[RMDB]
RNA sequence: GGGAACGACUCGAGUAGAGUCGAAAAGCCAACAUGAUGAAACCCAGUCUCUACUAAAAAUAAAACAAUUAGCUGGGCAUGGUGGUGCAUGCCUAUAAUCCCAGUUACUUGGGAGGGUGAGGCAGAAAAAUCGCUUGAACCUCAGAGGCAGAGGUUAUACCCCAUACUGGUUCGCCAGUAUGGGGUAAAAAGAAACAACAACAACAAC
Reactivity to 2A3 in 0.01 (KOAc 150mM, MgCl2 10mM, bicine 150mM(pH8.5), 24C), signal-to-noise 1, nucleotides 027 to 156: g010c030c000a010a010c050a030u080g000a040u020g020a040a040a000c000c000c030a080g030u030c020u070c100u190a060c110u230a200a080a010a000a020u180a010a200a090a000c040a080a130u260u090a090g020c020u010g060g000g000c010a010u010g000g000u000g070g060u030g090c010a000u010g000c000c000u080a120u120a080a040u020c050c000c000a000g010u060u060a090c080u020u120g020g080g020a020g050g050g000u090g030a070g000g000c000a010g110a010a140a050a000a000u070c050g020c060u080u110g020a010a010c040c000u030c000a030g000a100g200g130c040a040g020a000g000g030u000u000a010